Annotation
Conditions: 150 mM KOAc, 10 mM MgCl2 and 150 mM bicine (pH 8.5), 24 C. The record gives the reactivity of an RNA of 177 nucleotides to DMS and 2A3. It was measured as part of the RMDB library OK2TRN.
RNA sequence: GGGAACGACUCGAGUAGAGUCGAAAAGGAGGAGGUCUGCCCAAUUUCCCUUAUAUCCAUACCACGGCAGACUUCGAAGGGCUUGAGAAAGGGAAAUUGGUGGUAUGGAUAUGUCUCAAGCCUUAGACUACACCAAUGUAUUCGUACAUUGGUGUAGAAAAGAAACAACAACAACAAC
Reactivity to DMS in 0.01 (KOAc 150mM, MgCl2 10mM, bicine 150mM(pH8.5), 24C), signal-to-noise 7, nucleotides 027 to 126: g010g010a160g010g000a090g010g010u000c010u000g010c010c000c160a080a270u000u000u000c000c000c000u010u000a130u010a080u010c000c000a010u000a010c010c010a110c070g010g010c020a020g000a030c030u000u000c050g010a110a120g010g000g020c000u000u000g010a020g010a040a120a100g000g000g000a010a030a050u000u010g010g030u000g000g010u000a010u000g000g000a030u000a030u010g010u000c000u000c010a010a010g000c010c000u000u000a070g010a250
Reactivity to 2A3 in 0.01 (KOAc 150mM, MgCl2 10mM, bicine 150mM(pH8.5), 24C), signal-to-noise 5, nucleotides 027 to 126: g070g040a040g040g040a020g000g020u000c000u010g000c000c010c020a030a040u040u020u020c010c010c020u070u170a300u040a020u110c000c000a000u000a010c000c010a020c010g010g000c010a000g000a010c000u020u000c010g010a050a040g020g000g000c000u010u010g010a010g020a070a080a030g050g010g020a020a040a030u060u060g100g010u030g000g000u010a000u000g010g000a010u020a090u100g040u000c000u000c010a010a000g010c000c000u010u020a020g020a010